[RMDB]
RNA sequence: GGGAACGACUCGAGUAGAGUCGAAAAUCGACUUCAUGUUUGAAAAUGGCUUCCGCCAUUGGUGAUCUACAGAAGUUACCCAAACAAAUGAAUGCGACCGAUAUUUUUGGUUUUUCAAUUGUCAUUAGAGGGACGAUAUAUUCGUAUAUCGUCCCUCAAAAGAAACAACAACAACAAC
Reactivity to DMS in 0.01 (KOAc 150mM, MgCl2 10mM, bicine 150mM(pH8.5), 24C), signal-to-noise 4, nucleotides 027 to 126: u020c210g000a000c000u000u020c020a110u020g000u000u000u030g000a030a010a010a010u000g000g000c020u000u060c300c240g010c010c010a000u000u010g010g010u130g000a080u000c030u000a060c090a080g000a030a000g000u000u000a070c010c000c010a150a130a080c100a000a060a070u000g000a030a010u000g030c220g020a020c000c000g010a060u010a060u010u040u020u020u010g000g010u000u000u020u000u010c010a030a100u000u000g000u010c110a130u020u010a160
Reactivity to 2A3 in 0.01 (KOAc 150mM, MgCl2 10mM, bicine 150mM(pH8.5), 24C), signal-to-noise 6, nucleotides 027 to 126: u150c020g020a000c000u020u010c030a270u050g070u080u070u070g090a090a070a010a020u000g000g030c040u300u100c110c230g000c010c000a000u000u020g000g040u120g050a050u010c040u060a010c030a040g000a000a010g000u020u020a050c000c000c000a050a070a010c010a000a030a040u050g020a020a020u090g070c070g040a000c010c020g050a060u030a280u120u210u050u110u150g020g010u030u040u010u010u030c030a070a060u050u030g120u100c070a100u020u240a080